Chemical mapping of a 177-nucleotide RNA with 2A3. Conditions: 150 mM KOAc, 10 mM MgCl2 and 150 mM bicine (pH 8.5), 24 C. Reactivities are given for positions 27 through 126. 2A3 adducts were read by reverse transcription with SuperScript II with manganese.
RNA sequence: GGGAACGACUCGAGUAGAGUCGAAAAGGCGCUGGGGAUGUACACGGGUUUGCCCCCGUAUCUGUGUAUUAUCUCUUUUUAUAGCGCUGGGAUAGGUGGAGUGGGGGCGGUCUGCGCUUGGCGGGUGGUGUAUUUAUUUAUUCGUAAAUAAAUACACAAAAGAAACAACAACAACAAC
Reactivity to 2A3 in 0.01 (KOAc 150mM, MgCl2 10mM, bicine 150mM(pH8.5), 24C), signal-to-noise 1, nucleotides 027 to 126: g030g000c000g020c010u020g000g020g000g000a000u010g010u000a000c000a000c000g000g000g000u030u050u180g090c000c000c000c000c000g010u020a030u020c010u010g020u000g000u010a010u170u110a040u030c010u000c000u000u060u010u030u040a300u140a060g000c010g000c000u010g010g010g010a090u120a100g040g060u160g040g050a170g040u240g020g020g010g000g000c020g000g000u000c090u160g000c000g000c030u070u240g080g000c000g010g060g000u180g000